Annotation:
Chemical mapping of a 177-nucleotide RNA with DMS and 2A3. Source: RMDB library RFMREP, as collected in RNAgym. 2A3 adducts were read by reverse transcription with SuperScript II with manganese. The DMS profile rests on 1,091 reads. For DMS the reverse transcriptase was MarathonRT.

RNA sequence: GGGAACGACUCGAGUAGAGUCGAAAAUGAUCUUUGGCGAUCACUGCCUCUCUGGGCCUGUGUCUUAGGCUCUGCAAGAUCAACCGAGCAAAGCACACGGCCUGCAGAGAGGCAGCGCUCUGCCCCUCUUGACAUAACUGUUCGCAGUUAUGUCAAGAAAAGAAACAACAACAACAAC
Reactivity to DMS in 0.01 (KOAc 150mM, MgCl2 10mM, bicine 150mM(pH8.5), 24C), signal-to-noise 1, nucleotides 027 to 126: u020g020a070u000c030u000u010u000g010g010c060g000a020u020c010a130c010u000g000c000c010u000c000u000c020u000g000g000g020c000c010u000g050u000g000u040c010u000u000a140g020g010c010u000c000u000g000c190a100a070g020a140u010c240a060a110c050c080g000a030g000c020a070a090a030g000c020a020c000a050c220g000g020c000c010u010g020c020a000g000a010g030a010g000g020c020a000g050c040g000c160u000c070u000g030c020c010c170c070u030
Reactivity to 2A3 in 0.01 (KOAc 150mM, MgCl2 10mM, bicine 150mM(pH8.5), 24C), signal-to-noise 2, nucleotides 027 to 126: u100g030a040u050c040u080u110u200g050g000c040g020a010u050c020a000c030u000g000c000c000u010c000u010c000u000g000g000g020c000c010u040g000u010g080u120c010u010u040a130g180g020c010u000c010u020g050c120a110a090g030a300u160c050a020a080c020c030g000a000g000c000a030a000a000g000c000a010c000a030c120g000g000c000c000u010g010c000a000g000a000g000a010g000g000c000a000g000c000g000c010u060c060u150g050c000c000c000c000u020